[RMDB]
RNA sequence: GGGAACGACUCGAGUAGAGUCGAAAAGCAAUGAAAUUGACGAGCAACCAGCUGAACAACAGCCACUGGCAGCAACUGCUGCUAAAGCUGGAGGAGGUGGAGGUGGAGGUGGGAGCGGUGUCGGGCACAUGCUCUAGAUUUUCGAAUCUAGAGCAUGAAAAGAAACAACAACAACAAC
Reactivity to 2A3 in 0.01 (KOAc 150mM, MgCl2 10mM, bicine 150mM(pH8.5), 24C), signal-to-noise 5, nucleotides 027 to 126: g020c020a020a090u140g100a180a100a120u150u100g060a050c050g020a020g000c000a020a050c030c030a020g020c030u020g050a090a040c040a020a020c000a050g020c000c010a030c040u010g010g000c010a000g000c010a110a300c160u300g000c000u010g010c000u040a100a040a040g010c010u030g020g000a020g000g030a050g030g050u170g050g060a080g020g020u090g000g050a040g010g030u060g000g000g030a120g050c070g020g030u070g010u080c090g010g010g010c050a020
Reactivity to DMS in 0.01 (KOAc 150mM, MgCl2 10mM, bicine 150mM(pH8.5), 24C), signal-to-noise 3, nucleotides 027 to 126: g000c060a060a090u000g010a060a080a300u000u010g010a070c090g010a120g000c070a090a100c060c070a090g020c030u010g020a110a090c120a070a080c070a030g030c030c040a050c140u000g000g030c040a020g030c010a300a060c170u010g000c010u010g000c010u000a020a050a100g020c030u000g000g010a120g000g000a150g000g020u010g000g010a090g010g010u010g010g000a100g000g000u000g000g000g000a060g000c070g000g000u000g000u000c140g000g000g000c170a150